[RMDB]
RNA sequence: GGGAACGACUCGAGUAGAGUCGAAAAUACAAGGUGCGAUUAUCAUUCCAGUAUUAUUUAUUAUGAAUGCUUUGUUUGGACUAACAGGUGUCAUUUGGUCAUUAUUAAUUGCUGAGUCACUUUGUGCAGCGAGGCAGAAGUUCGCUUCUGCCUCGCUAAAAGAAACAACAACAACAAC
Reactivity to 2A3 in 0.01 (KOAc 150mM, MgCl2 10mM, bicine 150mM(pH8.5), 24C), signal-to-noise 1, nucleotides 027 to 126: u100a000c030a020a070g000g000u020g000c070g180a220u000u140a300u300c080a110u150u000c000c000a000g040u000a060u160u070a060u070u210u100a010u040u000a010u040g070a000a000u000g010c000u000u110u160g000u000u000u140g070g180a100c000u010a070a000c030a030g120g000u040g150u160c030a040u040u080u080g060g000u030c030a000u000u060a000u060u030a000a000u040u000g000c000u070g000a000g010u020c000a000c000u000u000u000g060u010g000c000
Description
The record gives the reactivity of an RNA of 177 nucleotides to 2A3. For 2A3, 445 sequencing reads were counted. 2A3 adducts were read by reverse transcription with SuperScript II with manganese. The reactions ran in a buffer of 150 mM KOAc, 10 mM MgCl2 and 150 mM bicine (pH 8.5), at 24 C.